This 177-nucleotide RNA was probed chemically with DMS and 2A3. The RNA was probed in 150 mM KOAc, 10 mM MgCl2 and 150 mM bicine (pH 8.5) at 24 C. Values cover nucleotides 27 to 126. For 2A3 the reverse transcriptase was SuperScript II with manganese.
[RMDB]
RNA sequence: GGGAACGACUCGAGUAGAGUCGAAAAUGACCGCGUUCGCCGAUCUGAUCCUGCCCGACACGACGUAUCUCGAACGGCACGACGCGAUGUCGAUGCUCGACCGGCCGAUCUCCGAGUUCGACGGCCACAUUAUAAAUUAUUUCGAUAAUUUAUAAUGAAAAGAAACAACAACAACAAC
Reactivity to DMS in 0.01 (KOAc 150mM, MgCl2 10mM, bicine 150mM(pH8.5), 24C), signal-to-noise 9, nucleotides 027 to 126: u010g010a070c020c020g010c060g010u000u000c090g020c030c020g000a060u000c030u010g010a070u000c030c030u000g010c030c030c040g010a100c140a090c070g000a060c050g010u000a050u000c020u000c090g010a060a130c080g010g000c020a060c080g010a030c020g010c120g000a090u010g010u000c010g010a090u000g010c060u010c040g000a090c100c060g010g010c060c030g000a080u000c030u000c060c040g000a100g010u010u000c030g010a080c060g010g010c020c030a150
Reactivity to 2A3 in 0.01 (KOAc 150mM, MgCl2 10mM, bicine 150mM(pH8.5), 24C), signal-to-noise 5, nucleotides 027 to 126: u090g010a020c010c000g020c030g020u030u050c050g000c020c020g010a060u000c030u060g020a030u030c010c020u050g040c010c020c030g070a030c030a020c110g110a020c030g060u070a070u040c040u020c040g040a070a030c000g020g000c020a020c080g030a000c010g030c060g060a040u160g010u010c010g030a060u080g000c030u040c050g050a070c040c020g000g030c010c000g050a140u030c030u010c080c050g020a050g070u100u130c020g040a030c020g060g020c030c000a010